Structure probing data (2A3 and DMS) for a 177-nucleotide construct. Reactivities are rounded to 0.1 and cut off at 0 and 3. The reactions ran in a buffer of 150 mM KOAc, 10 mM MgCl2 and 150 mM bicine (pH 8.5), at 24 C. The 2A3 profile rests on 1,023 reads. The data come from the RNA Mapping Database (RMDB), library OK2TST.
RNA sequence: GGGAACGACUCGAGUAGAGUCGAAAAGCAAGACGCCUGACGCCAAAGAGCUAAACGCCGAGAACGCCGUGAUCCUGGCCAAGGACGGCAAGCACACCAUCGGCUACGAGAAGCUGGUGGAAGCGAGCUUGCUAACCGGUUUCGACCGGUUAGCAAGAAAAGAAACAACAACAACAAC
Reactivity to 2A3 in 0.01 (KOAc 150mM, MgCl2 10mM, bicine 150mM(pH8.5), 24C), signal-to-noise 1, nucleotides 027 to 126: g020c020a040a040g070a050c020g030c040c070u040g020a020c020g000c060c060a130a120a040g160a010g020c000u030a010a000a200c050g000c030c070g030a040g020a030a030c050g070c000c000g010u010g020a050u070c000c010u030g110g000c100c020a020a060g010g010a000c030g020g010c010a010a010g000c000a020c000a000c030c000a000u030c000g010g080c000u040a010c180g040a040g050a170a020g000c020u020g000g030u030g010g020a010a010g090c050g010a030g010
Reactivity to DMS in 0.01 (KOAc 150mM, MgCl2 10mM, bicine 150mM(pH8.5), 24C), signal-to-noise 1, nucleotides 027 to 126: g020c080a100a040g000a130c050g000c000c000u000g000a300c110g020c020c000a140a110a130g020a130g000c040u000a060a100a150c080g000c030c020g000a150g010a040a110c200g010c030c020g020u040g020a060u010c000c010u000g010g000c020c080a100a150g000g000a050c130g000g000c030a080a110g010c000a090c140a190c000c010a070u000c030g000g000c050u050a090c230g000a030g000a080a050g050c060u000g000g010u000g000g000a090a030g000c020g000a170g000